[RMDB]
RNA sequence: GGGAACGACUCGAGUAGAGUCGAAAAGCACGAUCCGCACCCAGGACCGGGUCGGGUGGUCGUCGUGCAGCACCGGCCGCAGCCACCCCAGGUAGGCGAUCACGCCGUAGGUGAACGCCAGCGCCAAGCUGCACGAGGAUUUCGAUCCUCGUGCAGCAAAAGAAACAACAACAACAAC
Reactivity to 2A3 in 0.01 (KOAc 150mM, MgCl2 10mM, bicine 150mM(pH8.5), 24C), signal-to-noise 1, nucleotides 027 to 126: g040c000a020c000g030a040u040c020c040g060c040a040c010c030c010a080g000g120a060c080c050g040g000g010u030c040g010g020g030u040g020g050u070c050g060u000c000g000u010g000c000a010g070c010a040c030c040g030g010c090c000g000c000a000g020c010c000a020c010c010c020c010a010g050g010u060a050g040g000c000g010a050u020c020a010c080g120c080c080g110u120a080g050g060u010g010a020a000c000g020c000c010a010g060c040g020c070c000a080a050
Reactivity to DMS in 0.01 (KOAc 150mM, MgCl2 10mM, bicine 150mM(pH8.5), 24C), signal-to-noise 2, nucleotides 027 to 126: g010c040a050c020g000a040u000c060c090g030c170a050c000c000c010a180g010g020a080c140c080g020g010g020u000c050g010g000g020u000g000g010u020c090g010u000c020g040u000g030c040a070g060c060a100c110c090g000g010c000c010g040c060a140g000c020c060a090c040c000c010c010a060g000g000u000a130g020g020c010g000a060u000c100a080c030g020c070c170g000u000a050g000g040u010g050a030a100c060g010c020c000a110g000c050g050c020c040a190a130